[RMDB]
RNA sequence: GGGAACGACUCGAGUAGAGUCGAAAACUAGGAUCGUUCGCGAUCCUAGAAAGGCGCGGCACCGUCCGGGGAACAAACGGCAAAACAAGAAAGUCAGCAUAAAAAUCAUCAGCUUCGGCUGAUGAAACCUAACCACGUAGUUCGCUACGUGGUUAGGAAAAGAAACAACAACAACAAC
Reactivity to DMS in 0.01 (KOAc 150mM, MgCl2 10mM, bicine 150mM(pH8.5), 24C), signal-to-noise 1, nucleotides 027 to 126: c000u000a000g000g000a000u000c010g020u000u020c180g000c020g010a030u000c000c000u000a000g000a000a040a130g050g010c050g020c020g000g020c050a140c040c070g010u020c010c010g000g000g000g000a130a050c140a010a010a060c100g020g030c030a040a050a050a050c100a100a100g000a110a050a090g010u010c080a040g000c110a070u040a010a100a070a100a050u000c000a000u010c000a000g020c010u000u000c180g000g010c000u020g010a000u010g000a000a040a080
Reactivity to 2A3 in 0.01 (KOAc 150mM, MgCl2 10mM, bicine 150mM(pH8.5), 24C), signal-to-noise 2, nucleotides 027 to 126: c010u000a000g020g000a020u000c010g010u110u070c110g000c000g060a000u000c010c000u010a010g000a000a020a010g050g020c040g010c020g050g000c000a020c080c000g070u040c030c010g000g020g040g070a060a010c030a050a040a010c020g050g030c040a040a090a000a060c070a060a070g060a110a070a000g090u080c030a010g000c070a110u180a190a110a010a010a020u050c010a010u010c000a010g000c030u030u160c240g120g000c000u000g040a000u010g000a000a000a000